[RMDB]
This 177-nucleotide RNA was probed chemically with 2A3 and DMS. 2A3 adducts were read by reverse transcription with SuperScript II with manganese. For DMS the reverse transcriptase was MarathonRT. Source: RMDB library OK1LIB, as collected in RNAgym. Conditions: 150 mM KOAc, 10 mM MgCl2 and 150 mM bicine (pH 8.5), 24 C.
RNA sequence: GGGAACGACUCGAGUAGAGUCGAAAAGCUCGGUGACCCAUUGUAAAGGUGGGUCCGACCGACCUCUUGUCGCAAAUCAACAAGAAAUUGAUUAGCCUGUACGAUGGUUGGGCCCUCGCUUCGCGGGUCAAGGUACCGUGUUCGCGCGGUGCCUUGAAAAAGAAACAACAACAACAAC
Reactivity to 2A3 in 0.01 (KOAc 150mM, MgCl2 10mM, bicine 150mM(pH8.5), 24C), signal-to-noise 9, nucleotides 027 to 126: g020c020u010c010g040g080u080g050a040c010c000c020a040u040u190g110u160a100a080a030g050g010u010g000g000g000u000c000c000g000a000c000c000g050a030c010c010u080c040u060u100g130u120c050g000c040a010a030a030u030c000a000a030c020a080a040g090a110a080a030u010u010g000a000u010u010a010g000c000c010u040g030u100a030c040g030a070u150g010g000u010u010g000g000g000c000c000c000u010c010g060c020u040u030c030g010c020g020g000g010
Reactivity to DMS in 0.01 (KOAc 150mM, MgCl2 10mM, bicine 150mM(pH8.5), 24C), signal-to-noise 9, nucleotides 027 to 126: g000c060u000c020g020g010u010g010a030c000c000c000a100u030u020g020u030a070a040a060g010g010u000g010g000g010u000c000c020g010a010c000c000g000a110c200c090u010c040u010u010g010u030c150g010c040a070a040a040u000c010a020a020c070a120a150g020a080a120a190u000u000g000a020u000u010a100g000c020c080u010g010u020a050c160g010a110u030g000g010u000u000g000g000g000c000c000c000u000c010g000c020u000u000c070g020c070g000g000g010